An RNA of 177 nucleotides, treated with DMS and 2A3 and read out base by base. The RNA was probed in 150 mM KOAc, 10 mM MgCl2 and 150 mM bicine (pH 8.5) at 24 C. The DMS profile rests on 2,873 reads. For DMS the reverse transcriptase was MarathonRT.
RNA sequence: GGGAACGACUCGAGUAGAGUCGAAAAGAUAUGGAUCCCAACAAGCAACAGCGGACCAUCGGAAACGAUGGUUCCGACAUGCUUCUAGGGAUCCUAAGUCAAAGCUCUGUAGUUCGCUACAGAGCAACCCUUUAUCCUUCUUCGGAAGGAUAAAGGGAAAAGAAACAACAACAACAAC
Reactivity to DMS in 0.01 (KOAc 150mM, MgCl2 10mM, bicine 150mM(pH8.5), 24C), signal-to-noise 3, nucleotides 027 to 126: g020a020u000a190u030g000g000a010u000c000c000c000a110a110c300a040a010g050c010a080a100c300a150g010c010g000g000a050c020c000a000u000c000g000g000a070a060a130c020g010a010u000g000g020u000u000c010c010g000a030c080a300u000g020c010u000u000c030u000a300g030g010g000a010u000c000c000u010a010a070g000u000c020a130a130a090g010c000u000c000u000g020u010a000g010u000u010c270g030c000u010a000c000a020g000a040g000c010a010a010
Reactivity to 2A3 in 0.01 (KOAc 150mM, MgCl2 10mM, bicine 150mM(pH8.5), 24C), signal-to-noise 2, nucleotides 027 to 126: g040a010u010a020u100g000g000a000u010c000c000c010a000a000c040a030a000g040c040a040a120c050a270g000c020g010g000a000c020c000a010u010c000g050g010a070a010a020c000g010a000u020g010g040u050u040c000c010g010a000c000a090u300g000c000u010u000c030u110a110g000g000g000a000u000c000c000u000a020a000g000u010c050a170a090a050g000c000u000c000u000g010u000a010g040u050u080c300g020c140u010a010c000a000g010a000g000c000a000a010